[RMDB]
RNA sequence: GGGAACGACUCGAGUAGAGUCGAAAACAAGGGUCUUCGGACCCUUGAAAAACCGUAGGCUCGUGCCAUUUCGAUAAGCCUCCACUUCGAAAGAGGUGGAAGGCUUUUGACGAAAUGCACGAGCCUAAACGGAAAAAUCGGUCGUUCGCGACCGAAACGUUAGCAAAACUUUCGAGUUUUGCUAACGAAAAGAAACAACAACAACAAC
Reactivity to DMS in 0.01 (KOAc 150mM, MgCl2 10mM, bicine 150mM(pH8.5), 24C), signal-to-noise 1, nucleotides 027 to 156: c020a030a040g020g010g010u000c020u000u000c270g060g000a030c000c010c000u000u020g000a020a050a060a070a120c000c000g030u000a100g010g000c000u020c010g020u000g000c050c080a060u000u000u000c010g010a230u000a000a030g000c010c000u000c000c000a010c000u000u000c000g000a120a170a300g000a050g030g000u000g000g020a030a020g040g040c020u000u010u000u010g000a300c130g010a010a020a020u020g000c010a030c020g020a010g020c010c000u000a000a010a060c010g000g030a020a090a060a120a140u000c010g010g000u020c000g000u000u000c230g030c020g050a000c010c000g000a000a040a060
Source information:
Structure probing data (DMS) for a 207-nucleotide construct. The data come from the RNA Mapping Database (RMDB), library RNAMAK.